RNA sequence: GGGAACGACUCGAGUAGAGUCGAAAACGCCGUGGCCGAAGCCGACCGUGAGUUGGCCGACGUGCUAGCCAGCGCGCAUGCGGCCAUGCGGGAAAGCGUCCGUCGGCUGGAUGCUAUCGCGGCCGAACACAACCCCUCCAUUCGUGGAGGGGUUGUGAAAAGAAACAACAACAACAAC
Reactivity to 2A3 in 0.01 (KOAc 150mM, MgCl2 10mM, bicine 150mM(pH8.5), 24C), signal-to-noise 4, nucleotides 027 to 126: c050g010c010c010g010u040g020g000c030c020g050a020a000g000c000c000g010a010c010c010g080u140g090a210g130u070u020g000g000c010c000g030a130c000g000u020g000c000u030a060g130c070c150a030g000c020g000c000g000c040a060u130g050c000g000g000c000c000a020u070g020c010g020g030g050a050a150a020g030c030g070u020c020c030g010u000c010g030g000c000u030g000g020a120u150g040c020u100a080u300c060g000c010g030g020c000c000g060a070a000
Reactivity to DMS in 0.01 (KOAc 150mM, MgCl2 10mM, bicine 150mM(pH8.5), 24C), signal-to-noise 2, nucleotides 027 to 126: c110g000c010c040g050u000g010g010c020c000g010a070a050g030c000c020g010a060c120c040g020u000g000a090g010u030u000g000g000c020c040g030a100c000g000u000g000c000u000a170g000c100c170a040g030c030g000c090g000c250a050u010g000c000g000g000c000c000a000u030g010c000g010g000g010a090a090a130g000c020g010u000c080c090g000u010c050g000g040c030u000g000g000a140u050g020c010u000a040u010c300g000c020g010g000c000c010g030a140a140